[RMDB]
RNA sequence: GGGAACGACUCGAGUAGAGUCGAAAAAGAUGAUGUAAUUAAAGAUGAUGAAUUACCAUAAACACUAAUGAGACAACAUGGCAAGAGCUAACGUUUUUGUGAAAUUCAUACUUUAGUCUUGAGUUAAGAAUAAAGAUCAUAGUGAGCUUUACUAUUACUCCGUAUACCUGUUCGCAGGUAUACGGAGAAAAGAAACAACAACAACAAC
Reactivity to 2A3 in 0.01 (KOAc 150mM, MgCl2 10mM, bicine 150mM(pH8.5), 24C), signal-to-noise 3, nucleotides 027 to 156: a000g080a030u100g020a060u090g020u060a070a010u120u200a160a180a030g140a120u130g010a020u030g040a070a000u070u020a020c040c020a000u120a070a090a020c030a000c030u070a210a160u130g020a070g040a060c040a130a010c010a080u100g040g000c000a030a020g020a000g030c020u020a010a040c040g030u020u020u040u130u070g030u000g050a070a120a010u020u020c000a000u030a070c010u020u060u040a030g020u060c010u040u050g070a070g020u100u150a060a000g010a020a080u110a070a050a050g040a020u060c020a000u040a040g040u030g030a030g020c030u090u100u060a020c040u030a030u180u030a110
Reactivity to DMS in 0.01 (KOAc 150mM, MgCl2 10mM, bicine 150mM(pH8.5), 24C), signal-to-noise 1, nucleotides 027 to 156: a020g000a050u040g040a140u010g000u020a000a010u010u000a020a030a110g020a060u000g000a100u040g000a080a100u000u010a060c090c010a050u020a050a050a060c070a060c050u000a110a060u000g010a180g030a050c140a020a090c060a160u010g020g000c040a100a140g020a140g050c010u000a120a100c120g020u000u010u020u000u000g010u010g030a040a000a000u000u000c020a030u000a060c000u000u000u000a020g020u000c000u000u000g040a300g040u000u000a050a080g000a080a040u000a030a070a000g000a100u000c030a040u000a080g020u020g000a050g080c020u020u010u000a040c020u010a150u000u000a150